[RMDB]
RNA sequence: GGGAACGACUCGAGUAGAGUCGAAAAGAAAGAGAGUUAGACACGGUUGAUCUCACCCUUCGAGGGGGCUAUAGAGAUCACUGGAAGCACUACCGGACAACCGGAACAUUGCAGCAAUGCAGCCCAAAAAAUCCAAACAUCUUCGGAUGUUUGGAAACGUCUAGUAACUGUUCGCAGUUACUAGACGAAAAGAAACAACAACAACAAC
Reactivity to DMS in 0.01 (KOAc 150mM, MgCl2 10mM, bicine 150mM(pH8.5), 24C), signal-to-noise 1, nucleotides 027 to 156: g040a030a090a160g000a140g030a060g000u010u000a060g040a080c060a100c010g000g020u000u000g020a020u000c000u000c000a220c020c010c000u010u000c080g070a270g000g000g000g030g020c050u010a090u000a060g000a070g020a040u000c020a030c050u010g000g000a090a110g060c090a090c070u000a130c000c020g020g040a190c100a090a090c020c060g060g020a170a090c130a070u010u000g000c050a070g010c080a080a080u010g000c000a130g030c000c000c000a000a050a100a060a150a190u000c000c000a010a010a010c010a000u000c010u000u000c300g040g000a030u000g000u000u020u030g000g000a000a010a040
Reactivity to 2A3 in 0.01 (KOAc 150mM, MgCl2 10mM, bicine 150mM(pH8.5), 24C), signal-to-noise 2, nucleotides 027 to 156: g090a000a140a000g140a010g010a000g040u110u140a070g010a090c060a030c110g060g010u100u190g020a010u000c010u000c010a050c010c030c000u060u150c220g040a240g000g000g020g010g000c030u090a070u090a250g010a000g000a000u010c000a000c000u000g000g050a090a040g000c010a000c110u030a020c020c000g000g040a070c070a250a210c030c000g000g040a030a020c050a030u030u170g000c010a010g010c020a030a020u040g000c000a020g030c000c000c000a020a090a010a070a000a020u000c000c000a010a010a000c000a000u010c000u020u040c110g060g000a000u010g000u000u000u000g000g000a000a010a000